RNA sequence: GGGAACGACUCGAGUAGAGUCGAAAAGAUAUGGAGAGUGAGGUGGACAUGAUCGACUAUCGGAAACGAUAGGCCGAUCAACAGCCACUCACUCUCCUAAGUCAAAAGUUCGAGUUCGCUCGAACAACCCAGUAAUGAACUUCGGUUCAUUACUGGGAAAAGAAACAACAACAACAAC
Reactivity to 2A3 in 0.01 (KOAc 150mM, MgCl2 10mM, bicine 150mM(pH8.5), 24C), signal-to-noise 3, nucleotides 027 to 126: g010a010u070a020u110g000g020a000g010a030g020u020g020a080g120g300u190g040g050a100c130a300u300g000a000u010c000g000a000c010u000a000u000c000g010g010a040a020a020c020g000a000u010a010g030g020c160c000g000a010u000c010a010a020c010a010g030c020c000a000c010u000c000a000c000u000c000u000c000c000u000a010a010g000u010c000a000a030a100a030g010u010u000c000g010a000g010u050u160c250g100c140u000c000g000a000a010c010a010a010
Reactivity to DMS in 0.01 (KOAc 150mM, MgCl2 10mM, bicine 150mM(pH8.5), 24C), signal-to-noise 3, nucleotides 027 to 126: g000a010u000a300u010g000g010a030g000a030g010u000g000a080g000g040u000g020g030a020c090a220u000g000a010u000c000g010a120c000u000a000u000c000g050g000a130a060a180c000g020a010u000a000g000g000c250c010g010a000u000c010a030a050c260a190g000c010c000a020c000u000c000a000c000u000c000u000c000c000u000a000a070g010u000c020a090a100a150a070g010u010u000c000g010a000g040u010u020c300g000c010u000c000g010a010a000c020a090a130